[RMDB]
RNA sequence: GGGAACGACUCGAGUAGAGUCGAAAAGAUAUGGACCCUUCCCACCACGCGAUGAGGAAGCUCGGAAACGAGCUUCCGAGCGUGAGUGGGAGAGGGUCCUAAGUCAAAACGCGGGUUCGCCCGCGAACAUAGUGUGGAGGUUCGCCUCCACACUAUGAAAAGAAACAACAACAACAAC
Reactivity to 2A3 in 0.01 (KOAc 150mM, MgCl2 10mM, bicine 150mM(pH8.5), 24C), signal-to-noise 3, nucleotides 027 to 126: g030a030u090a040u210g010g010a010c010c010c000u020u000c000c000c000a000c000c010a000c000g030c010g300a300u120g030a070g070g010a000a000g000c000u000c000g020g050a080a110a100c010g010a010g000c030u000u000c000c000g000a000g020c000g010u000g050a100g010u010g000g000g020a010g070a000g000g010g000u010c000c000u000a000a000g000u000c010a000a000a070a120c020g000c020g020g010g040u080u090c290g170c060c000c000g000c000g000a030a010
Reactivity to DMS in 0.01 (KOAc 150mM, MgCl2 10mM, bicine 150mM(pH8.5), 24C), signal-to-noise 4, nucleotides 027 to 126: g000a060u010a300u010g000g000a010c000c000c000u000u000c000c000c000a020c010c000a000c000g020c000g000a180u020g030a300g000g000a020a010g030c000u000c000g000g010a110a120a190c010g000a020g010c000u000u000c000c000g000a030g010c000g020u000g000a080g030u000g020g000g010a000g000a010g000g010g010u000c000c000u000a000a080g010u000c050a120a060a100a170c030g030c000g010g010g010u000u020c300g010c000c000c010g020c000g000a040a170